[RMDB]
RNA sequence: GGGAACGACUCGAGUAGAGUCGAAAAGAUAUGGAGCGCCACGGGAGCUCUGUGUCGGAAACGACACUGAGCGACGAUCGUGACGCUCCUAAGUCAAAAGCAAUCGAGUCUUCGGACUCGAUUGCAACUGUAUUUUUACCUUCGGGUAAAAAUACAGAAAAGAAACAACAACAACAAC
Reactivity to DMS in 0.01 (KOAc 150mM, MgCl2 10mM, bicine 150mM(pH8.5), 24C), signal-to-noise 2, nucleotides 027 to 126: g020a020u010a100u010g000g020a000g020c000g020c000c000a010c020g020g010g010a070g030c020u020c000u010g000u010g000u010c000g030g000a020a010a040c000g020a000c000a010c000u010g010a000g040c010g010a120c300g000a100u000c000g020u000g000a000c000g010c000u000c000c000u000a000a040g000u020c010a140a160a180a160g010c000a030a000u000c000g000a030g000u000c000u000u020c250g020g010a000c000u000c000g010a000u000u000g010c000a010a030
Reactivity to 2A3 in 0.01 (KOAc 150mM, MgCl2 10mM, bicine 150mM(pH8.5), 24C), signal-to-noise 1, nucleotides 027 to 126: g000a000u020a010u050g000g010a010g000c000g040c010c020a010c020g020g050g080a190g020c020u020c020u010g000u000g000u030c000g000g000a020a000a010c000g000a000c010a000c040u030g000a000g050c040g130a110c080g050a080u030c010g000u000g000a010c000g000c000u000c000c000u000a010a000g000u000c020a000a000a100a080g020c010a010a000u000c020g020a010g030u000c010u160u300c300g100g010a000c000u020c000g010a000u000u010g020c020a000a000